RNA sequence: GGGAACGACUCGAGUAGAGUCGAAAACAUAUGACGGAGAGUGGAACACUCAGCGGAAACGCAUCCAAUGUCUGAAGUCUUUAAUGGGUUUAACAGUCAGUUGACCCAGAUCCCAACAGACAAUAAACACUCUUGUCAUAUUCGUAUGACAAGAGUGAAAAGAAACAACAACAACAAC
Reactivity to DMS in 0.01 (KOAc 150mM, MgCl2 10mM, bicine 150mM(pH8.5), 24C), signal-to-noise 5, nucleotides 027 to 126: c100a060u000a030u000g010a070c060g000g000a070g020a070g030u020g010g010a170a130c120a030c010u000c040a160g020c030g000g000a070a110a130c020g040c010a300u000c050c050a110a100u010g010u000c000u000g020a170a190g000u000c030u000u010u000a180a180u000g010g000g010u000u000u010a010a010c000a140g030u010c250a080g010u000u000g000a000c010c000c000a010g000a100u000c010c000c000a070a130c040a030g000a020c030a070a040u010a060a060a190
Reactivity to 2A3 in 0.01 (KOAc 150mM, MgCl2 10mM, bicine 150mM(pH8.5), 24C), signal-to-noise 2, nucleotides 027 to 126: c020a030u170a070u220g060a040c060g040g000a020g000a000g110u060g010g210a180a030c040a010c060u030c030a030g010c000g020g000a040a040a010c030g000c010a000u020c020c010a090a090u090g000u000c000u000g040a080a010g010u000c000u030u030u040a080a070u020g010g010g020u010u040u190a030a020c040a070g300u250c040a040g000u110u010g010a000c000c000c000a000g000a020u000c000c020c000a000a030c010a000g030a000c020a040a090u150a090a100a010